[RMDB]
RNA sequence: GGGAACGACUCGAGUAGAGUCGAAAAAUCGGGACAACAACCCAACGCGGCAGGUGUACCGUUGGGCAAAACGUUUACUGGCGCGUUUCGAUUGAGGUAGUUUCGACGCGAACAAGGUCAGGCGGGAUCUUUUCUUAACGUUCGCGUUAAGAAAAGAAAAAGAAACAACAACAACAAC
Reactivity to 2A3 in 0.01 (KOAc 150mM, MgCl2 10mM, bicine 150mM(pH8.5), 24C), signal-to-noise 8, nucleotides 027 to 126: a000u070c030g000g020g040a020c020a080a010c020a030a050c080c000c010a000a000c010g020c040g100g000c040a110g040g170u190g090u250a110c030c000g010u010u020g040g020g010c050a030a070a010a000c030g010u030u040u070a070c030u040g100g000c010g000c010g030u010u030u050c010g010a040u010u110g040a050g080g050u160a060g030u050u010u050c020g010a020c010g020c020g040a070a040c050a090a070g060g020u040c030a020g040g030c020g060g010g000a020
Reactivity to DMS in 0.01 (KOAc 150mM, MgCl2 10mM, bicine 150mM(pH8.5), 24C), signal-to-noise 6, nucleotides 027 to 126: a030u020c030g010g010g000a070c090a100a080c170a110a100c010c010c010a040a020c010g000c110g030g010c020a100g010g020u030g000u040a040c100c010g000u000u000g010g010g000c170a050a040a040a060c030g010u010u010u010a080c050u000g000g010c010g010c060g010u000u000u010c050g000a090u010u020g010a070g010g010u010a070g020u020u010u010c030g000a070c050g000c020g010a050a050c080a070a060g000g010u010c040a050g000g000c050g000g010g010a080